[RMDB]
RNA sequence: GGGAACGACUCGAGUAGAGUCGAAAAUGCCAAGCUGAAUGUUUUCAUGACCAUAGUUACAGAAGCACUUUGUAACUAUAAUCAUUUUUUCAGAAAUUUCACAUUUCUUUGCUUUAGGAAACAUAGCACUUGUCCAAUCAAUAUUAUGAAGAAAGGCUCACUUGUUGCUGUUCGCAGCAACAAGUGAAAAAGAAACAACAACAACAAC
Reactivity to 2A3 in 0.01 (KOAc 150mM, MgCl2 10mM, bicine 150mM(pH8.5), 24C), signal-to-noise 1, nucleotides 027 to 156: u200g020c000c000a030a000g000c050u050g050a080a050u000g020u000u060u040u050c000a030u110g010a110c060c000a010u000a010g000u000u000a010c000a000g000a150a030g130c110a060c170u090u020u000g010u000a000a000c000u000a000u080a020a010u000c010a050u020u160u140u000u060u120c030a030g010a040a080a060u130u300u240c060a050c010a050u050u000u000c080u080u170u240g010c020u110u100u140a040g000g000a000a040a020c010a010u030a030g020c000a040c080u050u120g030u000c010c000a010a020u050c050a050a020u050a050u260u090a110u230g050a100a030g060a000a040a000g020g000c020